Structure probing data (2A3) for a 177-nucleotide construct. The 2A3 profile rests on 1,772 reads. Conditions: 150 mM KOAc, 10 mM MgCl2 and 150 mM bicine (pH 8.5), 24 C. 2A3 is a SHAPE reagent: it acylates the 2'-hydroxyl of flexible nucleotides of all four kinds. Reactivities are given for positions 27 through 126.

[RMDB]
RNA sequence: GGGAACGACUCGAGUAGAGUCGAAAAGAUAUGGAGGGAUCCUGGGCUAUGAAGUCGGAAACGAUGGAGCCUUGGAUUCCCUCCUAAGUCAAAGAAUUCCUAACGGCUUCGGCCGUUAGGAAUUCAACCGAUACAUUGUGUUCGCACAAUGUAUCGGAAAAGAAACAACAACAACAAC
Reactivity to 2A3 in 0.01 (KOAc 150mM, MgCl2 10mM, bicine 150mM(pH8.5), 24C), signal-to-noise 1, nucleotides 027 to 126: g020a020u030a040u170g000g020a000g000g030g020a000u000c010c010u000g000g040g000c010u100a200u300g020a020a000g030u020c000g000g020a120a060a100c000g030a020u020g000g000a000g000c020c000u020u000g000g000a000u000u000c010c000c000u000c000c000u010a000a000g000u020c000a050a120a120g000a010a000u020u020c010c000u000a000a010c000g020g000c030u180u200c300g140g050c000c030g000u000u000a000g000g010a010a000u000u010c000a010a010